Structure probing data (DMS) for a 177-nucleotide construct. DMS (dimethyl sulfate) methylates the pairing face of unpaired adenines and cytosines. Source: RMDB library OK2TRN, as collected in RNAgym.
[RMDB]
RNA sequence: GGGAACGACUCGAGUAGAGUCGAAAAGAUCAAUUAUGAUUGCAAUGUAAUAUGUCAAGGCAGACAUAUCUAACUGUCGCCUUAGCUAGAGAUAGCCGAUUUAUUGCUUUCAUAAGAACGGCAAGAACAUGGUGGUCGCAUUCGUGCGACCACCAUGAAAAGAAACAACAACAACAAC
Reactivity to DMS in 0.01 (KOAc 150mM, MgCl2 10mM, bicine 150mM(pH8.5), 24C), signal-to-noise 1, nucleotides 027 to 126: g010a150u020c070a070a070u000u000a000u000g010a130u000u000g010c000a030a000u000g000u000a000a010u000a020u000g020u020c220a040a000g000g000c000a080g060a000c040a070u000a100u040c300u000a190a060c200u000g000u000c010g000c020c000u000u000a070g010c030u000a000g000a190g000a280u000a010g020c010c130g030a060u000u000u000a000u030u000g000c030u000u000u000c000a010u010a000a030g010a080a070c180g010g020c100a060a090g000a020a070
Reactivities are given for positions 27 through 126.